[RMDB]
Notes:
This 177-nucleotide RNA was probed chemically with DMS and 2A3. The 2A3 profile rests on 1,689 reads. 2A3 adducts were read by reverse transcription with SuperScript II with manganese. DMS adducts were read by reverse transcription with MarathonRT. Source: RMDB library OK1LIB, as collected in RNAgym. The reactions ran in a buffer of 150 mM KOAc, 10 mM MgCl2 and 150 mM bicine (pH 8.5), at 24 C.
RNA sequence: GGGAACGACUCGAGUAGAGUCGAAAAGAAUAAGCAAAAAUGUGAUCUUGCUUGUAAAUACAAUUUUGAGAGGUUAAUCAAUUACAAGUAGUGCUAUUUUUGUCUCUCUCUGCAAUAACGAACCGAAACUCCACUAGUACUUCGGUACUAGUGGAGUAAAAGAAACAACAACAACAAC
Reactivity to DMS in 0.01 (KOAc 150mM, MgCl2 10mM, bicine 150mM(pH8.5), 24C), signal-to-noise 2, nucleotides 027 to 126: g020a120a080u000a030a120g000c000a010a000a000a060a020u000g000u000g000a080u030c050u020u000g030c000u010u010g000u000a010a000a090u030a140c150a050a020u000u000u010u010g000a060g030a150g000g010u000u030a100a290u030c130a050a030u000u000a010c040a010a050g000u000a070g000u000g010c050u000a000u000u000u010u030u000g010u000c020u000c080u030c000u000c050u000g020c090a030a040u080a040a080c110g000a070a170c040c010g010a070a080
Reactivity to 2A3 in 0.01 (KOAc 150mM, MgCl2 10mM, bicine 150mM(pH8.5), 24C), signal-to-noise 3, nucleotides 027 to 126: g080a020a030u210a020a040g010c000a020a010a020a000a020u190g130u050g270a230u100c010u030u010g010c000u000u000g000u030a000a040a040u200a070c050a090a150u090u030u090u120g050a070g000a000g210g000u080u180a030a090u130c060a040a040u010u000a030c000a010a010g010u030a000g130u040g030c000u020a010u020u030u000u000u070g120u010c010u000c000u000c000u010c040u040g030c030a000a230u100a150a040c080g040a020a000c040c000g050a160a030